[RMDB]
RNA sequence: GGGAACGACUCGAGUAGAGUCGAAAACGGGUUGGGCUGUAGGGUACACUAUGCUGGCCUGCCCACUCCAAGUUGAGAGUUGGGCCAUGGGAUUUGGGCGAAGGCUCAGAUCUCCUGGUCACUAGAACGAUCAAUAGUAGUUCGCUACUAUUGAUCGAAAAGAAACAACAACAACAAC
Reactivity to DMS in 0.01 (KOAc 150mM, MgCl2 10mM, bicine 150mM(pH8.5), 24C), signal-to-noise 3, nucleotides 027 to 126: c220g020g000g000u000u010g030g010g000c020u010g020u000a040g010g010g010u010a120c200a120c050u000a030u010g020c120u010g000g000c010c000u000g010c000c000c000a090c050u010c020c030a110a120g010u000u010g010a120g010a130g000u010u000g010g010g000c010c040a010u010g000g010g010a010u000u010u000g010g010g010c020g000a170a100g010g010c000u000c000a000g000a010u000c000u000c010c030u000g000g010u000c000a110c070u000a080g020a130a200
Reactivity to 2A3 in 0.01 (KOAc 150mM, MgCl2 10mM, bicine 150mM(pH8.5), 24C), signal-to-noise 1, nucleotides 027 to 126: c080g020g000g000u160u110g190g040g000c050u120g130u190a060g070g040g240u280a040c070a050c080u110a150u280g070c130u020g080g000c000c020u000g000c000c000c000a000c020u010c010c010a100a040g120u140u210g110a150g010a010g070u300u180g010g010g000c000c000a030u000g000g000g000a020u000u000u000g000g010g000c070g070a110a040g150g000c010u030c020a010g000a030u000c020u000c000c000u010g000g000u040c000a000c000u040a030g030a070a050